[RMDB]
RNA sequence: GGGAACGACUCGAGUAGAGUCGAAAAUGCGCAGGGAUACAGUGUUAACGACAUCAUCCAUAUCCUGAUGGCAGAAGGAUGUCAGGCAUGAGCGCACGUUCACGGGCACUGAUCCCCCUCAGCGCAGCCUAUGACAUCUCUUCGGAGAUGUCAUAGGAAAAGAAACAACAACAACAAC
Reactivity to DMS in 0.01 (KOAc 150mM, MgCl2 10mM, bicine 150mM(pH8.5), 24C), signal-to-noise 9, nucleotides 027 to 126: u010g000c000g060c010a290g000g000g000a030u000a100c030a020g000u000g010u000u010a070a120c100g010a140c010a040u000c010a060u000c000c020a040u000a060u000c040c030u000g000a130u000g010g010c300a090g000a140a050g000g010a020u000g010u000c040a100g020g010c150a030u000g000a020g010c070g010c190a040c120g010u000u000c180a070c120g010g000g000c010a010c010u010g000a090u000c020c010c000c110c100u000c140a080g000c000g010c010a050g010
Reactivity to 2A3 in 0.01 (KOAc 150mM, MgCl2 10mM, bicine 150mM(pH8.5), 24C), signal-to-noise 9, nucleotides 027 to 126: u040g010c010g000c010a010g000g050g000a010u190a230c010a010g010u000g030u080u100a120a040c050g050a030c010a020u010c000a010u020c010c010a020u020a030u090c030c050u100g080a080u080g130g010c070a060g090a100a020g100g010a010u040g010u070c080a040g050g060c110a040u030g020a010g030c090g010c110a080c150g040u020u030c040a030c070g010g040g000c010a010c000u010g000a020u030c010c000c000c000c010u120c070a030g000c000g010c000a010g010
Overview: The record gives the reactivity of an RNA of 177 nucleotides to DMS and 2A3. The RNA was probed in 150 mM KOAc, 10 mM MgCl2 and 150 mM bicine (pH 8.5) at 24 C. The DMS profile rests on 12,278 reads. Reactivities are given for positions 27 through 126.